Structure probing data (2A3 and DMS) for a 207-nucleotide construct. 2A3 adducts were read by reverse transcription with SuperScript II with manganese. Values cover nucleotides 27 to 156. It was measured as part of the RMDB library M2RFPK. The RNA was probed in 150 mM KOAc, 10 mM MgCl2 and 150 mM bicine (pH 8.5) at 24 C.
RNA sequence: GGGAACGACUCGAGUAGAGUCGAAAAGAGCUUUUGUCCGGAAUGGUUCCGCCGUGAUCGGGCCAUGCAAUAGUUGCCAACGACAACUAUGCUCCGGUUGCGCAGGCAGCGUAACGCUGCUUGAAAGAUGACGGCAAUCGCUUCGGCGAUUGCCGAACUAUAUUUUUGGGUUCGCCCAAAAAUAUAGAAAAGAAACAACAACAACAAC
Reactivity to 2A3 in 0.01 (KOAc 150mM, MgCl2 10mM, bicine 150mM(pH8.5), 24C), signal-to-noise 3, nucleotides 027 to 156: g030a020g030c010u160u120u140u160g110u100c020c030g000g080a110a070u090g050g050u230u150c020c020g020c030c040g070u070g030a090u110c000g050g020g020c100c040a050u100g000c000a080a300u010a000g000u000u010g000c050c090a160a060c140g080a160c020a000a000c010u000a010u020g010c010u020c040c020g010g000u030u030g000c040g000c020a000g000g000c010a020g010c010g060u160a110a050c250g000c000u010g010c000u010u020g030a030a030a030g100a070u130g110a010c050g000g030c000a000a010u010c010g030c040u090u070c250g050g010c010g000a020u010u020g000c010c010g000a000a000
Reactivity to DMS in 0.01 (KOAc 150mM, MgCl2 10mM, bicine 150mM(pH8.5), 24C), signal-to-noise 1, nucleotides 027 to 156: g010a110g020c040u000u010u000u000g020u000c030c020g030g000a120a080u000g000g010u010u010c020c020g020c070c060g000u000g010a070u000c030g000g010g000c030c040a070u010g050c000a080a050u000a010g000u000u000g020c020c020a170a230c150g000a070c000a000a020c000u000a000u010g020c010u000c020c000g000g000u010u010g020c000g000c000a030g010g010c000a000g040c000g000u000a090a100c140g070c000u000g070c020u010u000g010a060a060a110g000a160u000g030a190c000g030g050c000a020a030u020c010g050c000u010u010c300g040g020c010g070a010u000u000g050c010c020g010a010a020